[RMDB]
RNA sequence: GGGAACGACUCGAGUAGAGUCGAAAAUCUAGGGUUCCCCAUGUCAAUUGACAUGGACUGGUCCGAGAGAAAACACAUACGCGUAAAUAGAAGCGCGUAUGCACACGGAGGGAAAAAAGCCCGGGAGAAUGGGAUUAUUAGUUCGCUAAUAAUCCAAACCAUACAUGAACUUCGGUUCAUGUAUGGUAAAAGAAACAACAACAACAAC
Reactivity to 2A3 in 0.01 (KOAc 150mM, MgCl2 10mM, bicine 150mM(pH8.5), 24C), signal-to-noise 2, nucleotides 027 to 156: u050c020u070a060g000g020g000u050u030c000c030c000c000a000u000g000u020c030a150a300u260u300g000a000c000a000u000g010g020a030c070u120g030g040u030c000c020g010a020g010a010g020a060a140a010a000c070a010c020a000u010a000c010g020c010g060u110a050a290a150u210a300g180a300a080g020c000g000c030g000u000a010u000g000c040a020c010a000c050g000g030a070g010g000g000a080a200a050a100a060a000g040c000c020c040g020g070g010a060g010a070a070u240g060g020g000a000u000u000a000u000u000a000g010u010u040c180g010c130u000a000a000u000a000a000u000c000c000a000a040
Reactivity to DMS in 0.01 (KOAc 150mM, MgCl2 10mM, bicine 150mM(pH8.5), 24C), signal-to-noise 1, nucleotides 027 to 156: u000c030u000a000g010g010g000u000u000c010c050c000c010a030u000g030u010c010a280a130u010u000g000a010c030a070u020g010g000a040c060u000g030g000u000c040c000g000a110g010a150g000a090a040a130a140c090a080c000a000u000a000c010g070c000g080u010a030a070a190u010a120g000a270a300g020c020g000c010g010u010a000u000g000c010a080c090a090c030g010g010a160g020g000g000a010a040a120a050a050a140g010c000c000c000g010g010g020a090g010a200a090u000g000g020g010a030u010u000a020u000u000a010g000u000u010c300g060c020u020a020a000u000a010a000u000c000c000a000a050
Structure probing data (2A3 and DMS) for a 207-nucleotide construct. DMS adducts were read by reverse transcription with MarathonRT.